[RMDB]
RNA sequence: GGGAACGACUCGAGUAGAGUCGAAAAGGAUCGUACCGUACCUAGACUCAUGAUCGUACUACAUGGAUACGCACAUGCGAUCGGUACAUCAGUACCUAGCAUGUGCUGCCAUGUCACUAGAGUACGCGGUUUCCCAGAUAUUCGUAUCUGGGAAACCAAAAGAAACAACAACAACAAC
Reactivity to 2A3 in 0.01 (KOAc 150mM, MgCl2 10mM, bicine 150mM(pH8.5), 24C), signal-to-noise 4, nucleotides 027 to 126: g040g000a040u090c050g050u080a130c060c020g000u020a040c010c010u020a060g040a090c030u030c150a090u160g110a110u110c060g050u100a080c040u010a000c030a010u000g010g050a170u080a140c140g000c010a000c000a000u010g010c010g020a040u190c180g000g030u030a000c010a070u250c080a070g000u000a000c000c010u000a010g000c000a000u010g020u000g000c000u000g000c000c000a000u000g020u010c010a060c040u070a050g000a030g130u020a010c010g040c050
Reactivity to DMS in 0.01 (KOAc 150mM, MgCl2 10mM, bicine 150mM(pH8.5), 24C), signal-to-noise 4, nucleotides 027 to 126: g010g010a030u000c030g010u000a080c130c040g000u000a010c030c010u010a010g000a190c090u010c040a140u010g010a060u010c040g000u010a120c090u000a040c000a020u000g010g000a080u020a030c160g020c000a010c010a010u000g000c000g010a140u010c210g000g000u010a010c010a150u020c220a140g010u000a020c010c000u010a250g000c000a000u000g020u000g010c000u000g010c000c000a000u000g010u000c150a080c050u000a030g000a090g010u010a010c020g040c300
Conditions: 150 mM KOAc, 10 mM MgCl2 and 150 mM bicine (pH 8.5), 24 C. The record gives the reactivity of an RNA of 177 nucleotides to 2A3 and DMS. The 2A3 profile rests on 4,368 reads. For 2A3 the reverse transcriptase was SuperScript II with manganese. It was measured as part of the RMDB library OK2TRN.